[RMDB]
Chemical mapping of a 177-nucleotide RNA with 2A3 and DMS. The 2A3 profile rests on 4,093 reads. Conditions: 150 mM KOAc, 10 mM MgCl2 and 150 mM bicine (pH 8.5), 24 C.
RNA sequence: GGGAACGACUCGAGUAGAGUCGAAAAGAUAUGGAGGACGGACGAAUGGCGACGACGCUAUGUCGGAAACGACAUAGCAUCAGCCACGUUUCCUCCUAAGUCAAAGCCCGAGCUUCGGCUCGGGCAAGGUGAUGUAACAGUUCGCUGUUACAUCACCAAAAGAAACAACAACAACAAC
Reactivity to 2A3 in 0.01 (KOAc 150mM, MgCl2 10mM, bicine 150mM(pH8.5), 24C), signal-to-noise 2, nucleotides 027 to 126: g020a020u010a010u040g000g020a000g000g020a020c100g040g120a050c120g170a300a300u300g030g000c030g090a300c030g000a000c010g090c010u000a010u010g000u010c000g000g000a000a010a020c000g010a000c000a010u000a000g000c000a010u010c010a010g000c000c000a010c000g000u010u080u030c000c020u010c000c000u000a010a000g000u010c020a000a240a040g000c000c000c000g020a000g000c120u250u300c300g140g000c010u010c040g000g020g000c010a000a000
Reactivity to DMS in 0.01 (KOAc 150mM, MgCl2 10mM, bicine 150mM(pH8.5), 24C), signal-to-noise 2, nucleotides 027 to 126: g000a010u000a020u000g000g000a030g010g000a070c300g010g030a100c130g020a300a230u030g040g010c000g000a000c290g010a000c020g000c000u000a000u000g010u000c000g000g010a010a010a000c000g020a000c000a010u000a000g000c000a000u000c000a000g010c000c010a050c000g000u000u000u000c010c000u000c000c000u000a000a100g000u000c000a120a100a260g000c030c010c000g000a000g000c000u000u000c160g020g020c000u020c010g000g000g020c000a000a000